[RMDB]
RNA sequence: GGGAACGACUCGAGUAGAGUCGAAAAGGAGAAUGAUUUACAAUAGUUUGGUAUAUACCCAGUAAUGGGAUUGCUGGGUCAAAGGAUAUCUCUGGUUCUAGAUCCUUGAGGAAUCACCCACACUGUCUCGGGCUUAUAAUUUCGAUUAUAAGCCCGAAAAAGAAACAACAACAACAAC
Reactivity to DMS in 0.01 (KOAc 150mM, MgCl2 10mM, bicine 150mM(pH8.5), 24C), signal-to-noise 2, nucleotides 027 to 126: g030g020a040g000a120a070u000g000a110u010u010u000a070c090a080a060u000a110g020u000u010u000g000g010u000a070u000a090u000a050c010c000c000a020g000u000a060a030u010g030g020g030a300u000u000g020c000u000g000g000g000u000c100a090a050a050g010g000a070u000a020u010c020u000c120u000g000g000u000u000c050u000a080g000a060u000c020c030u000u020g020a200g010g000a050a050u000c060a180c030c010c030a110c190a070c190u000g000u000c140
Record summary: Chemical mapping of a 177-nucleotide RNA with DMS. Source: RMDB library OK2TRN, as collected in RNAgym. The DMS profile rests on 837 reads.